[RMDB]
RNA sequence: GGGAACGACUCGAGUAGAGUCGAAAACAAAGUUCCAAACUCAUUUCCUAUUGGAGACCUUUGUCCUACACAUUCACAGGACUUCACGCUUCACGAAAACGGAUUCUGCUCUGACUGUGGCGGCUAAACGAUUACUCCCAUUCGUGGGAGUAAUCGUAAAAGAAACAACAACAACAAC
Reactivity to DMS in 0.01 (KOAc 150mM, MgCl2 10mM, bicine 150mM(pH8.5), 24C), signal-to-noise 1, nucleotides 027 to 126: c090a060a050a060g010u000u000c020c010a030a070a170c160u010c160a080u010u000u000c080c030u000a150u000u000g000g000a020g000a040c180c010u000u000u000g000u000c040c010u000a070c140a070c120a050u000u010c050a060c080a080g000g000a030c070u000u000c020a090c070g000c010u000u000c080a070c160g010a060a040a060a050c140g000g000a070u000u020c000u000g000c090u020c090u000g000a030c140u000g060u000g000g000c040g020g000c060u000a040a060
Reactivity to 2A3 in 0.01 (KOAc 150mM, MgCl2 10mM, bicine 150mM(pH8.5), 24C), signal-to-noise 2, nucleotides 027 to 126: c020a020a060a020g020u040u020c020c010a000a040a180c070u050c070a150u040u120u120c000c050u160a150u090u120g020g010a000g050a080c010c020u090u070u060g050u100c020c000u060a030c050a020c010a070u120u120c010a040c020a070g010g090a070c000u020u020c090a090c060g050c010u090u000c060a040c140g110a100a070a040a040c030g140g000a050u100u040c000u030g110c000u010c050u080g040a050c000u030g000u050g040g000c060g000g000c030u080a170a150